[RMDB]
RNA sequence: GGGAACGACUCGAGUAGAGUCGAAAAGCUUGUAGCUUCGGCUACAAGCAUCUAAAAUCAGCGGUAAAUAAUUACGAGGCGUUACCGCUGAACGCCUCGAAACAACCACAUCAUUCGUGAUGUGGAACAAGAGUCAUGUAUUCGUACAUGACUCUUGAAAAGAAACAACAACAACAAC
Reactivity to DMS in 0.01 (KOAc 150mM, MgCl2 10mM, bicine 150mM(pH8.5), 24C), signal-to-noise 5, nucleotides 027 to 126: g000c000u000u000g010u010a000g000c000u000u020c190g020g000c010u000a010c000a010a000g010c000a010u000c040u010a050a070a120a110u000c010a000g020c000g010g010u000a030a040a030u010a040a050u010u010a090c060g010a010g010g000c000g010u000u000a070c030c010g000c000u000g000a010a030c010g000c010c010u000c010g010a080a060a070c180a050a140c010c000a010c000a000u000c000a050u000u010c190g020u000g010a010u000g020u000g000g000a040a080
Reactivity to 2A3 in 0.01 (KOAc 150mM, MgCl2 10mM, bicine 150mM(pH8.5), 24C), signal-to-noise 6, nucleotides 027 to 126: g000c000u000u000g000u010a000g000c010u030u050c300g120g000c000u010a000c010a000a000g000c000a010u000c010u060a050a070a020a100u030c000a000g010c010g160g220u200a060a090a070u110a060a130u210u150a120c050g000a010g010g000c000g010u000u030a140c000c000g000c000u000g000a000a000c000g000c000c000u000c000g000a030a040a010c050a030a040c010c000a000c000a000u010c000a020u020u140c190g120u050g010a000u000g000u000g000g020a000a000